[RMDB]
RNA sequence: GGGAACGACUCGAGUAGAGUCGAAAAACUGCCAUACGUGGCAGAAACACGCCUUACCAGGACUAAACAGGGUGUCUAAAAAACAGUCCUUCAUACCUGAUCUGGAGGGUAGAUCAGGAAUACUAAAAAAAUCGGGUGAAGUUCGCUUCACCCGAAAGAACCGAUUAAUCUUCGGAUUAAUCGGUUCAAAAGAAACAACAACAACAAC
Reactivity to 2A3 in 0.01 (KOAc 150mM, MgCl2 10mM, bicine 150mM(pH8.5), 24C), signal-to-noise 1, nucleotides 027 to 156: a000c000u030g010c030c000a040u020a070c150g100u000g010g010c000a010g020a000a010a000c070a030c040g060c000c000u010u070a040c020c050a030g010g020a060c020u110a060a160a030c030a020g020g020g010u030g060u020c050u100a090a050a010a020a010a010c010a020g020u020c030c010u040u090c040a060u080a090c020c010u000g000a010u010c000u020g060g090a080g030g020g020u020a010g020a000u000c010a000g010g030a010a030u140a060c020u060a050a050a040a000a020a090a080u060c020g020g000g020u000g000a000a010g040u070u160c130g000c090u000u020c000a000c000c000c000g000a000a000a000

The record gives the reactivity of an RNA of 207 nucleotides to 2A3. Reactivities are rounded to 0.1 and cut off at 0 and 3. The RNA was probed in 150 mM KOAc, 10 mM MgCl2 and 150 mM bicine (pH 8.5) at 24 C. It was measured as part of the RMDB library M2RFOK. Reactivities are given for positions 27 through 156.